The record gives the reactivity of an RNA of 177 nucleotides to DMS and 2A3.
The RNA was probed in 150 mM KOAc, 10 mM MgCl2 and 150 mM bicine (pH 8.5) at 24 C.
For 2A3, 779 sequencing reads were counted.

[RMDB]
RNA sequence: GGGAACGACUCGAGUAGAGUCGAAAAGCAUAUUUUGACAACAGCCUGGUUCGAAGACCUCGGGCCACAAUGGAAAAUUCUGGGGUUGCAACCUUUUAGGCGAUCUUUUAACUUUGAGAACACCGAAAAAGGUUAGAUCAUUCGUGAUCUAACCUUUAAAAGAAACAACAACAACAAC
Reactivity to DMS in 0.01 (KOAc 150mM, MgCl2 10mM, bicine 150mM(pH8.5), 24C), signal-to-noise 3, nucleotides 027 to 126: g000c090a100u000a070u000u000u000u000g030a070c100a080a130c080a150g030c060c100u000g020g020u000u000c050g030a050a140g010a090c190c050u000c020g000g010g020c040c030a070c130a090a080u010g010g010a100a120a100a120u010u000c050u000g020g020g000g000u000u010g020c090a050a080c030c020u000u000u000u020a080g020g020c030g000a060u000c020u010u000u000u010a050a100c110u000u000u010g000a070g010a080a090c070a090c030c010g010a060a070
Reactivity to 2A3 in 0.01 (KOAc 150mM, MgCl2 10mM, bicine 150mM(pH8.5), 24C), signal-to-noise 1, nucleotides 027 to 126: g000c000a040u100a090u190u110u090u150g060a000c000a100a010c010a060g050c040c000u040g030g010u000u000c060g040a140a030g080a080c010c000u020c000g070g020g000c000c010a040c040a050a050u110g050g030a140a070a100a170u220u030c070u080g000g070g070g000u060u030g010c020a000a000c000c000u030u070u120u210a030g000g000c000g040a010u000c000u070u070u070u050a090a040c030u040u090u060g000a000g050a010a020c000a040c090c000g050a200a050